RNA sequence: GGGAACGACUCGAGUAGAGUCGAAAAGAUAUGGAUGUUAGCUAGUCUCCCUCGCAUCGAUCAUGUUUAUUCGGAAACGAAUAAACAUGGGAGCGAGAAGGAGACUUGGACCUAACAUCCUAAGUCAUCUAACGAAGAUCUUCGGAUCUUCGUUAGAAAAAGAAACAACAACAACAAC
Reactivity to 2A3 in 0.01 (KOAc 150mM, MgCl2 10mM, bicine 150mM(pH8.5), 24C), signal-to-noise 1, nucleotides 027 to 126: g040a030u100a050u290g030g000a030u030g050u040u000a020g050c060u030a030g000u000c000u000c000c080c030u000c000g060c030a300u300c090g050a080u070c020a000u020g000u000u000u020a000u000u000c030g020g060a090a070a040c000g010a000a000u000a000a000a020c000a000u000g000g040g040a010g000c030g010a030g110a230a180g030g020a000g000a010c000u000u040g000g030a000c000c010u000a000a010c010a000u010c000c000u000a130a000g020u000c040a120
Reactivity to DMS in 0.01 (KOAc 150mM, MgCl2 10mM, bicine 150mM(pH8.5), 24C), signal-to-noise 2, nucleotides 027 to 126: g000a080u000a300u000g010g000a020u000g010u000u000a010g000c010u010a040g000u010c000u010c010c020c020u010c000g030c030a300u010c190g030a110u010c010a010u000g010u000u000u000a010u030u010c000g060g010a110a150a260c020g000a000a030u000a000a000a010c000a000u000g000g000g000a030g030c030g010a020g010a040a020g030g000a010g000a000c000u000u000g040g000a070c300c010u010a000a000c000a000u000c000c000u010a030a050g000u010c060a210
Background: An RNA of 177 nucleotides, treated with 2A3 and DMS and read out base by base. It was measured as part of the RMDB library TTRINS.